[RMDB]
This 177-nucleotide RNA was probed chemically with 2A3 and DMS. It was measured as part of the RMDB libraries RFM100 and RFMREP.
RNA sequence: GGGAACGACUCGAGUAGAGUCGAAAAUGUGAGAGUGAUGAGUUGCACACUGGUGGAGCCAUGGUAUCAGGUGAUACAGGCACCACUCAGUAUCACCCUGGUGACAAAAUCAAGUGCACAGGGGCCAUAGAGAUUAUCCUUUCGAGGAUAAUCUCUAAAAAGAAACAACAACAACAAC
Reactivity to 2A3 in 0.01 (KOAc 150mM, MgCl2 10mM, bicine 150mM(pH8.5), 24C), signal-to-noise 7, nucleotides 027 to 126: u190g050u070g030a070g010a020g030u050g020a060u050g030a040g070u080u100g060c050a020c000a000c070u000g000g000u010g000g000a030g000c000c060a160u170g180g000u020a010u020c020a060g180g270u300g120a000u010a010c010a010g010g000c000a010c020c000a010c000u160c010a000g000u030a040u070c030a070c010c000c020u050g100g100u040g090a080c040a010a130a020a050u110c070a130a080g040u060g110c010a010c000a040g010g000g000g000c020c020a060
Reactivity to DMS in 0.01 (KOAc 150mM, MgCl2 10mM, bicine 150mM(pH8.5), 24C), signal-to-noise 7, nucleotides 027 to 126: u010g000u010g010a080g000a090g010u010g010a040u010g000a190g010u000u010g010c070a050c110a060c010u000g020g030u000g000g010a070g020c000c000a070u030g020g010u000a010u000c010a300g020g020u050g000a010u000a010c000a140g000g010c000a110c010c000a010c010u020c010a010g000u000a070u030c070a070c020c020c020u010g010g000u000g000a050c080a050a060a110a110u040c210a060a070g020u020g000c010a020c030a050g000g000g000g020c100c060a110